The record gives the reactivity of an RNA of 177 nucleotides to DMS and 2A3. Conditions: 150 mM KOAc, 10 mM MgCl2 and 150 mM bicine (pH 8.5), 24 C. For 2A3 the reverse transcriptase was SuperScript II with manganese. 2A3 is a SHAPE reagent: it acylates the 2'-hydroxyl of flexible nucleotides of all four kinds. The DMS profile rests on 2,164 reads.
[RMDB]
RNA sequence: GGGAACGACUCGAGUAGAGUCGAAAAGAGCCUGUCAUCGAGGACGGCCUGGAAAGAGGAGAGCGCCACUUCCAUGGAGGCAGGAUGUCCCUUGCCCUGUCGACGAAGGAUCCUCCGGUCCCGCCUCCCUUGGGGGAGAGUUCGCUCUCCCCCAAGGAAAAGAAACAACAACAACAAC
Reactivity to DMS in 0.01 (KOAc 150mM, MgCl2 10mM, bicine 150mM(pH8.5), 24C), signal-to-noise 2, nucleotides 027 to 126: g000a140g010c030c010u010g010u020c040a110u010c170g000a130g000g010a080c090g020g020c060c010u000g010g010a080a110a090g010a070g010g030a050g020a080g010c080g010c250c080a140c030u000u010c010c050a080u010g020g000a060g000g010c010a040g010g000a090u010g000u000c010c000c030u010u000g010c110c010c030u000g000u000c050g000a080c050g000a050a030g010g000a110u000c030c000u000c040c020g000g000u020c020c010c040g000c070c010u010c030
Reactivity to 2A3 in 0.01 (KOAc 150mM, MgCl2 10mM, bicine 150mM(pH8.5), 24C), signal-to-noise 1, nucleotides 027 to 126: g040a020g080c020c060u080g030u030c050a180u200c080g130a080g110g000a040c010g000g000c000c010u040g020g080a140a050a020g080a100g020g000a050g000a030g040c040g000c030c050a070c030u070u000c000c000a070u100g000g030a050g010g020c000a000g030g040a050u080g090u100c020c020c000u010u060g020c020c000c010u050g050u070c020g040a080c010g060a080a060g050g020a060u020c040c030u050c020c000g000g010u000c000c000c040g010c000c000u000c000